The record gives the reactivity of an RNA of 177 nucleotides to 2A3 and DMS. For DMS, 9,662 sequencing reads were counted. High 2A3 reactivity points to a flexible backbone, as in loops and unpaired stretches. The reactions ran in a buffer of 150 mM KOAc, 10 mM MgCl2 and 150 mM bicine (pH 8.5), at 24 C.
[RMDB]
RNA sequence: GGGAACGACUCGAGUAGAGUCGAAAAAUUGCAUAUUACUGGAAUGACACAGCAUUUCUAACACUCUCGCUGUAUACGAGCAAAAUGCCGAUCACAGCCGCUGACGUGCUCAAUGACCGCGUAUUGCUACGAUCCAAUAUUUCGAUAUUGGAUCGUAAAAAGAAACAACAACAACAAC
Reactivity to 2A3 in 0.01 (KOAc 150mM, MgCl2 10mM, bicine 150mM(pH8.5), 24C), signal-to-noise 6, nucleotides 027 to 126: a000u050u070g010c020a010u070a040u170u100a110c050u060g030g070a100a040u070g030a040c020a000c020a120g040c020a030u030u050u040c030u080a110a020c030a020c060u040c020u030c060g000c010u000g020u060a040u030a070c050g020a040g060c020a030a100a110a080u130g020c040c010g000a030u050c030a030c040a040g020c010c030g030c070u070g040a070c060g060u080g000c010u010c020a040a100u090g020a030c000c020g000c030g040u060a060u070u130g020c020
Reactivity to DMS in 0.01 (KOAc 150mM, MgCl2 10mM, bicine 150mM(pH8.5), 24C), signal-to-noise 8, nucleotides 027 to 126: a070u010u000g010c050a060u000a080u000u000a070c080u000g010g010a100a080u000g000a100c100a070c090a060g000c090a060u000u000u000c030u000a080a100c130a080c090u010c040u000c040g020c040u010g010u010a060u010a070c110g000a070g010c110a050a040a080a060u000g010c060c020g000a080u010c100a040c110a090g000c030c060g010c160u010g000a070c120g010u000g010c030u000c070a070a070u000g000a060c020c040g010c070g010u000a090u000u010g010c110